The data come from the RNA Mapping Database (RMDB), library TTRDEL. This 177-nucleotide RNA was probed chemically with DMS and 2A3. The RNA was probed in 150 mM KOAc, 10 mM MgCl2 and 150 mM bicine (pH 8.5) at 24 C. For DMS the reverse transcriptase was MarathonRT. For 2A3, 3,743 sequencing reads were counted.
RNA sequence: GGGAACGACUCGAGUAGAGUCGAAAAGAUAUGGAUCUGGAUAGUUGCUAGCGAGGUCGGAAACGACUACCCACCGCUAGAACUACAACUUCCAGAUCCUAAGUCAAAACCUCGCUUCGGCGAGGAACUAAAUGGACCAGUUCGCUGGUCCAUUUAGAAAAGAAACAACAACAACAAC
Reactivity to DMS in 0.01 (KOAc 150mM, MgCl2 10mM, bicine 150mM(pH8.5), 24C), signal-to-noise 3, nucleotides 027 to 126: g010a040u010a300u010g000g010a010u000c000u010g000g000a030u000a010g010u000u000g000c000u010a010g000c010g000a110g040g000u000c010g000g000a130a070a210c010g010a020c020u000a080c070c030c120a300c070c000g010c020u010a020g000a000a040c070u010a300c030a020a010c030u010u030c000c010a000g000a000u000c010c010u000a010a130g000u020c070a120a060a040a100c000c000u000c000g010c000u000u000c210g010g000c000g010a000g030g000a000a050
Reactivity to 2A3 in 0.01 (KOAc 150mM, MgCl2 10mM, bicine 150mM(pH8.5), 24C), signal-to-noise 2, nucleotides 027 to 126: g020a020u080a030u120g000g000a000u000c000u010g040g000a050u150a300g000u010u020g060c000u000a010g010c010g030a010g000g010u020c020g030g000a060a080a060c040g030a010c030u110a090c040c050c000a030c000c020g000c010u000a000g010a040a060c020u230a030c000a040a000c010u010u000c000c000a010g000a000u010c000c000u000a020a000g030u020c000a020a010a070a200c000c000u000c000g010c000u060u080c240g210g010c000g010a000g000g000a000a000